[RMDB]
Chemical mapping of a 177-nucleotide RNA with DMS and 2A3. The 2A3 profile rests on 6,140 reads.

RNA sequence: GGGAACGACUCGAGUAGAGUCGAAAAGUGAAAACUGAUAGAGAUGCAGAUUUUGUUGCCACUCAGGUUGACCAAGAGUUCCACUUAGCUUUUGCUGUUUGGAAUGGUGUUCAAGACUAUUGCCAAAUACCAACUUAUACUUCGGUAUAAGUUGGUAAAAAGAAACAACAACAACAAC
Reactivity to DMS in 0.01 (KOAc 150mM, MgCl2 10mM, bicine 150mM(pH8.5), 24C), signal-to-noise 9, nucleotides 027 to 126: g010u000g000a100a080a070a070c020u010g010a130u010a110g010a090g010a100u000g030c020a050g010a150u010u000u010u010g020u000u000g010c040c080a110c090u000c060a080g010g010u010u000g010a140c090c030a060a080g010a120g010u000u000c010c020a060c100u000u000a040g010c020u000u000u000u000g010c050u000g010u000u000u000g010g000a020a030u000g010g010u000g010u000u000c200a060a090g010a060c030u000a050u000u010g000c010c030a050a060a120
Reactivity to 2A3 in 0.01 (KOAc 150mM, MgCl2 10mM, bicine 150mM(pH8.5), 24C), signal-to-noise 5, nucleotides 027 to 126: g060u060g050a070a000a000a020c020u020g020a090u120a160g060a020g020a040u080g000c000a010g040a140u050u070u120u290g140u120u050g020c020c020a020c010u030c020a020g020g020u040u040g030a030c010c010a070a000g030a020g120u020u000c020c000a030c040u040u080a030g010c000u130u110u160u300g020c040u040g020u030u020u010g020g000a010a020u030g020g010u070g030u090u110c060a070a030g030a050c020u030a050u060u110g110c020c000a030a040a020
DMS adducts were read by reverse transcription with MarathonRT.